The data come from the RNA Mapping Database (RMDB), libraries RFM100 and RFMREP. Structure probing data (DMS and 2A3) for a 177-nucleotide construct. 2A3 adducts were read by reverse transcription with SuperScript II with manganese. Reactivities are given for positions 27 through 126. The reactions ran in a buffer of 150 mM KOAc, 10 mM MgCl2 and 150 mM bicine (pH 8.5), at 24 C.
RNA sequence: GGGAACGACUCGAGUAGAGUCGAAAAGCAGCUGCUGCAUGACGCUUUAACGUCGCAGCUCACCACCGCCUGACCAUUCUGCCAGGAGAUAACGGUUGCCCACUCUUUAAUCAUUGUACUGCCCUGACAAUGGUUUUUCGUUCGCGAAAAACCAUUGAAAAGAAACAACAACAACAAC
Reactivity to DMS in 0.01 (KOAc 150mM, MgCl2 10mM, bicine 150mM(pH8.5), 24C), signal-to-noise 3, nucleotides 027 to 126: g000c140a020g010c090u000g010c000u030g000c090a160u060g020a030c000g010c110u000u000u010a160a150c040g000u000c040g040c020a010g000c000u010c030a070c060c050a100c070c050g020c040c000u000g010a120c060c060a090u000u000c040u030g000c010c030a060g000g010a060g010a050u020a080a110c110g030g000u010u010g010c050c010c020a120c100u000c100u000u000u020a040a070u000c050a070u000u010g000u010a040c040u010g000c000c000c030u000g000a120
Reactivity to 2A3 in 0.01 (KOAc 150mM, MgCl2 10mM, bicine 150mM(pH8.5), 24C), signal-to-noise 4, nucleotides 027 to 126: g030c060a000g010c030u070g010c000u050g020c040a130u210g010a020c010g030c040u130u110u170a130a020c010g010u000c010g000c000a010g000c010u010c000a020c010c010a030c020c010g010c010c000u050g020a060c010c000a070u120u030c040u090g030c010c000a040g000g030a060g030a020u150a120a050c030g020g010u020u050g040c000c010c010a040c000u030c020u030u120u080a080a050u080c050a060u000u100g030u030a020c020u050g030c000c010c020u010g010a010